[RMDB]
RNA sequence: GGGAACGACUCGAGUAGAGUCGAAAACCAUGUAUGGGCAUUGCUGCCGACGAAAGGACGGAGCCUCGGCAAAAGCUGUCUAUAUAUAGGCAGGAAAGCGGAAACAUGACAAGGGUGCAGUCUAUCAAUCGUCAUGCUCAUUCGUGAGCAUGACGAUAAAAGAAACAACAACAACAAC
Reactivity to 2A3 in 0.01 (KOAc 150mM, MgCl2 10mM, bicine 150mM(pH8.5), 24C), signal-to-noise 2, nucleotides 027 to 126: c000c030a000u040g040u020a160u130g020g040g000c080a040u020u200g000c020u070g000c000c000g030a030c010g130a070a040a040g110g030a000c000g130g010a000g000c000c000u050c030g000g020c000a030a000a000a100g020c000u000g000u000c000u130a050u000a010u000a000u040a110g060g020c070a010g020g100a120a140a000g000c020g120g010a050a150a040c070a060u260g050a000c000a090a030g020g000g000u030g000c030a000g010u000c000u000a000u070c110a010
Reactivity to DMS in 0.01 (KOAc 150mM, MgCl2 10mM, bicine 150mM(pH8.5), 24C), signal-to-noise 2, nucleotides 027 to 126: c040c010a180u020g010u010a030u020g050g000g000c040a070u000u060g010c080u000g000c000c000g000a100c080g020a040a090a050g000g000a100c090g030g000a210g000c060c050u010c090g010g000c010a010a020a120a080g000c020u000g000u000c010u000a050u030a090u030a070u010a060g000g000c020a000g000g030a050a010a070g010c060g020g000a020a100a020c090a050u000g000a070c110a070a070g080g000g030u020g000c160a050g000u000c050u020a110u000c160a100